About this RNA
The data come from the RNA Mapping Database (RMDB), library RNAMAK. Chemical mapping of a 207-nucleotide RNA with 2A3 and DMS. The RNA was probed in 150 mM KOAc, 10 mM MgCl2 and 150 mM bicine (pH 8.5) at 24 C. High DMS reactivity at an A or C suggests that its Watson-Crick edge is free. Reactivities are given for positions 27 through 156. The 2A3 profile rests on 2,708 reads.

RNA sequence: GGGAACGACUCGAGUAGAGUCGAAAACGCUGGGAGCGGGAGCACCUAACGGACAUGCUGAAGCGCGCACGGCAACAGCCGUUAGAAGUGCUUUGCUCCUGUGCUGAAGCGCGCACGGCAACCGAAAGGUGCGACGAACUGACGUUCGCGUCAGUAACACUAACGGAGCAUUCGUGCUCCGUUAGUGAAAAGAAACAACAACAACAAC
Reactivity to 2A3 in 0.01 (KOAc 150mM, MgCl2 10mM, bicine 150mM(pH8.5), 24C), signal-to-noise 3, nucleotides 027 to 156: c070g040c040u080g060g100g010a060g040c060g030g050g010a040g000c010a000c010c000u010a070a070c010g000g040a070c090a290u070g000c020u040g050a220a060g000c000g000c000g000c000a030c040g000g020c020a100a070c040a200g040c030c040g050u080u090a030g060a240a020g030u090g080c000u060u020u120g000c010u000c000c020u030g000u020g010c010u050g000a080a040g000c010g000c010g000c020a040c060g000g000c020a070a170c010c020g020a060a020a040g000g000u020g030c020g000a030c020g040a070a030c000u000g010a010c000g040u110u060c270g020c010g130u010c010a000g000u030a020a040
Reactivity to DMS in 0.01 (KOAc 150mM, MgCl2 10mM, bicine 150mM(pH8.5), 24C), signal-to-noise 1, nucleotides 027 to 156: c050g000c030u000g000g000g020a050g000c040g020g020g000a210g000c000a110c000c000u000a000a300c010g020g020a130c080a300u000g030c040u000g000a070a140g060c000g000c000g000c040a300c030g030g000c010a050a220c010a100g000c040c040g000u000u010a020g040a100a100g050u000g050c030u000u000u010g000c030u020c080c040u000g040u000g030c100u000g040a000a090g000c000g050c040g010c020a300c050g020g030c000a200a250c000c000g080a010a300a140g030g050u010g020c000g030a020c070g020a110a030c030u000g010a040c020g020u000u010c180g000c030g100u010c000a010g000u010a110a220